Annotation:
Chemical mapping of a 177-nucleotide RNA with 2A3 and DMS.

[RMDB]
RNA sequence: GGGAACGACUCGAGUAGAGUCGAAAAACGCGCUGGAUCGAUCAUGUGAUCCGGUACAGUACCGGUACGGAUCUCUCUGUACGUACCAGAGUGAGCGCGCUCAUCAGCGCGUGAGAUAGAUAGAGGCCGCAAUAGAGGUCUUCGGACCUCUAUUGCGAAAAGAAACAACAACAACAAC
Reactivity to 2A3 in 0.01 (KOAc 150mM, MgCl2 10mM, bicine 150mM(pH8.5), 24C), signal-to-noise 1, nucleotides 027 to 126: a030c010g030c000g010c010u030g050g020a050u070c040g020a120u150c070a160u220g070u110g090a010u040c000c000g000g010u060a080c030a050g020u060a020c020c030g040g000u030a020c020g020g040a060u030c050u000c000u010c000u120g050u120a070c000g020u020a050c000c010a000g010a030g100u060g020a080g000c010g000c000g000c000u050c030a270u090c060a030g000c000g000c000g000u010g000a060g000a040u200a050g080a010u060a070g050a020g020g020c090
Reactivity to DMS in 0.01 (KOAc 150mM, MgCl2 10mM, bicine 150mM(pH8.5), 24C), signal-to-noise 2, nucleotides 027 to 126: a070c030g010c050g020c000u000g030g000a040u000c040g020a080u010c140a090u000g020u010g000a030u000c020c000g000g010u000a020c100a170g010u000a120c050c060g010g000u000a020c020g000g010a050u000c030u000c010u010c060u000g010u010a080c120g010u000a080c050c000a050g010a080g020u000g010a240g020c010g020c120g030c020u020c170a120u010c100a040g000c010g000c010g020u000g010a090g000a160u020a050g000a170u010a070g010a050g010g010c300

2A3 adducts were read by reverse transcription with SuperScript II with manganese.
For DMS, 1,353 sequencing reads were counted.
The RNA was probed in 150 mM KOAc, 10 mM MgCl2 and 150 mM bicine (pH 8.5) at 24 C.
Values cover nucleotides 27 to 126.